Notes:
Conditions: 150 mM KOAc, 10 mM MgCl2 and 150 mM bicine (pH 8.5), 24 C. An RNA of 177 nucleotides, treated with 2A3 and DMS and read out base by base.
RNA sequence: GGGAACGACUCGAGUAGAGUCGAAAAUUGGACGCGGUGCCCUAUCUCUUUGAACGUGAGGGCACCAACUGCGAGAACCUGCCGGAAACACACGCUUUUCUCAAGCGAGUCCGCAAGGUGGUGGACGGGAGAAAGUUUUGUUCGCAAAACUUUCUCCAAAAGAAACAACAACAACAAC
Reactivity to 2A3 in 0.01 (KOAc 150mM, MgCl2 10mM, bicine 150mM(pH8.5), 24C), signal-to-noise 3, nucleotides 027 to 126: u150u100g060g010a010c050g030c000g040g000u010g000c030c000c000u090a290u090c060u000c030u080u180u300g120a100a010c140g000u040g070a020g000g010g010c000a000c000c000a010a010c000u020g000c010g020a050g010a060a030c000c010u040g060c090c040g050g080a110a170a000c100a020c020a010c060g000c000u050u080u030u010c050u050c030a020a020g010c000g040a030g030u000c010c010g000c030a140a030g090g000u090g020g050u050g060g050a030c070g050
Reactivity to DMS in 0.01 (KOAc 150mM, MgCl2 10mM, bicine 150mM(pH8.5), 24C), signal-to-noise 2, nucleotides 027 to 126: u000u030g000g000a060c000g000c300g030g030u020g080c030c000c010u000a050u040c010u020c010u000u020u000g000a120a090c030g020u000g030a120g000g010g010c010a080c000c010a030a070c260u030g000c060g000a170g060a120a010c000c030u000g010c100c000g000g000a000a050a080c080a100c110a110c050g010c000u010u040u040u050c060u050c100a170a110g090c060g000a130g000u010c050c000g110c050a110a280g000g000u000g000g030u000g000g040a110c160g010
Annotation
The data come from the RNA Mapping Database (RMDB), library OK1LIB.